This 177-nucleotide RNA was probed chemically with 2A3 and DMS. Values cover nucleotides 27 to 126. The DMS profile rests on 3,406 reads. The reactions ran in a buffer of 150 mM KOAc, 10 mM MgCl2 and 150 mM bicine (pH 8.5), at 24 C. The data come from the RNA Mapping Database (RMDB), library OK2TRN.
[RMDB]
RNA sequence: GGGAACGACUCGAGUAGAGUCGAAAAAUUAGCCAGGCGUGUUGGUGCACAACUAUAAUCCCAGCCACUCUGGAGGCUGAGGCAGGAGAAUAGCUUGAACCCGGGAGGUGGAGGUUGCGAUGAGCUGACUACGGUGUGAAUUCGUUCACACCGUAGUAAAAGAAACAACAACAACAAC
Reactivity to 2A3 in 0.01 (KOAc 150mM, MgCl2 10mM, bicine 150mM(pH8.5), 24C), signal-to-noise 1, nucleotides 027 to 126: a000u100u100a050g020c080c010a050g000g040c120g050u160g000u050u120g140g010u080g000c110a020c030a160a030c050u070a010u080a210a020u070c000c020c000a020g030c010c000a070c020u070c020u110g080g100a100g000g020c030u050g050a060g080g020c000a020g050g190a050g040a010a150u100a060g020c040u020u050g030a030a020c020c000c000g000g070g010a020g000g020u060g010g010a060g000g000u080u120g030c020g050a060u060g070a020g020c040u040g030
Reactivity to DMS in 0.01 (KOAc 150mM, MgCl2 10mM, bicine 150mM(pH8.5), 24C), signal-to-noise 3, nucleotides 027 to 126: a110u010u000a110g000c060c020a090g000g020c120g020u010g020u000u000g000g000u000g020c080a080c080a060a100c060u010a050u010a140a190u000c010c000c010a050g010c030c030a070c070u000c100u000g000g010a090g020g010c020u000g000a070g020g030c120a060g000g000a050g010a080a050u010a060g020c060u000u000g010a070a120c040c040c060g010g000g020a090g020g010u000g000g000a060g000g000u000u000g000c070g000a090u000g000a090g000c050u000g000